[RMDB]
RNA sequence: GGGAACGACUCGAGUAGAGUCGAAAAGCGCUGAUGACCCUGACGAUGUCAAAAGGGAGGCUUCCGAAAAGUGGAUUGAACGACAUUUUGCACGGAGGGGGAAGGAGCCACCGCGGCGAGAGCACUAGGUUACGACUCGGUUCGCCGAGUCGUAACCAAAAGAAACAACAACAACAAC
Reactivity to 2A3 in 0.01 (KOAc 150mM, MgCl2 10mM, bicine 150mM(pH8.5), 24C), signal-to-noise 1, nucleotides 027 to 126: g090c130g000c090u040g120a070u030g030a050c000c000c000u000g000a010c010g240a250u100g060u110c050a040a000a010a010g100g000g000a000g000g080c050u000u080c000c070g020a050a150a060a000g130u300g120g000a080u000u130g000a090a110c070g000a000c000a020u000u060u060u040g050c050a000c000g000g000a000g000g020g000g020g000a100a170g000g080a020g000c000c000a000c000c000g020c020g000g020c090g000a090g000a000g070c000a000c090u010a010

Conditions: 150 mM KOAc, 10 mM MgCl2 and 150 mM bicine (pH 8.5), 24 C. This 177-nucleotide RNA was probed chemically with 2A3. Reactivities are rounded to 0.1 and cut off at 0 and 3. Source: RMDB library OK1LIB, as collected in RNAgym. For 2A3, 428 sequencing reads were counted. 2A3 adducts were read by reverse transcription with SuperScript II with manganese.